[RMDB]
RNA sequence: GGGAACGACUCGAGUAGAGUCGAAAAGUUGGCAUGGCGCCGCGCCGAGGAGUUCGAAACGGCGUCAGACUCCUCAGAUGACGACUGCCCCAGUCUCCCUUCUCGAGAUAGCAGGGACGAGAAAUUGUAUGAUCGCCACUUUCGAGUGGCGAUCAUAAAAAGAAACAACAACAACAAC
Reactivity to 2A3 in 0.01 (KOAc 150mM, MgCl2 10mM, bicine 150mM(pH8.5), 24C), signal-to-noise 2, nucleotides 027 to 126: g100u090u060g090g010c130a050u000g030g000c050g000c000c000g000c020g000c040c020g010a050g180g100a260g040u080u000c030g040a000a060a060c000g070g000c000g000u010c000a000g030a010c040u050c020c000u000c080a050g020a070u010g030a000c100g070a090c020u050g010c010c020c000c000a000g080u000c010u000c000c000c050u090u010c020u000c000g110a130g050a170u230a060g100c050a000g100g010g000a050c120g030a050g200a020a030a000u300u180g110
Reactivity to DMS in 0.01 (KOAc 150mM, MgCl2 10mM, bicine 150mM(pH8.5), 24C), signal-to-noise 1, nucleotides 027 to 126: g000u000u010g000g040c090a160u000g050g000c070g010c030c060g050c300g000c200c040g000a110g000g010a000g020u100u000c000g000a020a100a090c000g020g020c000g000u010c050a010g000a100c030u000c080c000u000c000a020g000a090u010g000a000c000g000a040c000u000g000c060c000c000c110a100g000u000c000u010c060c000c110u030u000c000u000c070g000a180g000a040u030a010g010c060a000g000g000g020a110c180g010a070g040a040a110a000u060u000g010